Structure probing data (2A3 and DMS) for a 177-nucleotide construct. The 2A3 profile rests on 2,702 reads. The RNA was probed in 150 mM KOAc, 10 mM MgCl2 and 150 mM bicine (pH 8.5) at 24 C.
RNA sequence: GGGAACGACUCGAGUAGAGUCGAAAAAUUUAACUGCCAGGACGGUCACCUUUGGGGUGGUGACAAGUGUGAUCACUUGGGUGGUGGCUGUGUUUGCGAAUCUCCCAGGAAUCUCGUUUACCAGAUCGAUAUCCCUGCUGUUCGCAGCAGGGAUAUCAAAAGAAACAACAACAACAAC
Reactivity to 2A3 in 0.01 (KOAc 150mM, MgCl2 10mM, bicine 150mM(pH8.5), 24C), signal-to-noise 3, nucleotides 027 to 126: a010u190u230u100a100a060c080u110g000c010c000a000g000g040a010c020g000g010u040c010a010c000c000u060u140u210g160g010g010g000u020g000g000u030g030a010c010a020a100g150u120g040u060g220a050u040c000a000c000u010u040g110g000g040u050g020g000u000g040g000c000u000g010u040g070u010u030u050g010c000g020a060a040u020c030u020c060c000c000a010g020g040a080a070u030c030u010c040g020u010u050u030a140c020c010a020g020a100u150c060
Reactivity to DMS in 0.01 (KOAc 150mM, MgCl2 10mM, bicine 150mM(pH8.5), 24C), signal-to-noise 1, nucleotides 027 to 126: a000u050u000u020a010a070c100u030g000c040c030a000g010g000a020c050g010g030u000c010a000c030c020u030u000u040g000g010g000g000u010g050g050u020g000a090c040a100a120g000u000g010u010g000a080u000c060a010c000u000u000g030g000g010u030g000g000u000g000g000c070u070g070u000g020u050u000u000g000c050g060a050a000u090c170u000c010c000c000a190g000g000a050a000u000c140u000c020g000u000u010u010a090c080c010a050g000a130u080c150